The data come from the RNA Mapping Database (RMDB), library OK2TRN. Structure probing data (2A3 and DMS) for a 177-nucleotide construct. For DMS, 1,138 sequencing reads were counted. The RNA was probed in 150 mM KOAc, 10 mM MgCl2 and 150 mM bicine (pH 8.5) at 24 C.
[RMDB]
RNA sequence: GGGAACGACUCGAGUAGAGUCGAAAAGACUGACACUCACUGACUCAGUCACUCUGUCACACUGAGUGAGUCAGUGUCAGUGUGACUGACAGACUCACUGACUGUCUCUGUCUCUCAGUGUGAGACACCAGCACGGAUCAUUCGUGAUCCGUGCUGGAAAAGAAACAACAACAACAAC
Reactivity to 2A3 in 0.01 (KOAc 150mM, MgCl2 10mM, bicine 150mM(pH8.5), 24C), signal-to-noise 2, nucleotides 027 to 126: g020a010c010u020g010a010c000a020c040u130c000a060c040u090g040a010c050u030c020a000g040u030c000a120c040u160c080u130g210u110c050a010c010a000c090u020g000a010g050u070g030a000g070u000c020a010g000u030g000u020c020a010g000u000g010u000g040a080c070u040g000a010c010a060g050a020c000u010c060a020c020u030g030a010c000u040g050u100c030u030c030u130g060u000c040u000c020u030c080a060g100u020g060u040g080a000g000a000c030a080
Reactivity to DMS in 0.01 (KOAc 150mM, MgCl2 10mM, bicine 150mM(pH8.5), 24C), signal-to-noise 1, nucleotides 027 to 126: g020a040c040u010g010a030c040a040c080u010c200a020c040u010g000a060c030u000c000a020g000u000c040a100c080u010c080u000g020u010c100a100c190a080c000u020g000a010g000u000g010a100g010u000c110a040g000u000g000u000c010a010g010u000g000u000g000a110c010u000g000a070c170a080g010a080c060u000c010a070c070u000g010a060c060u000g010u000c050u010c090u000g000u010c040u000c020u000c040a120g010u010g020u000g000a070g020a080c150a170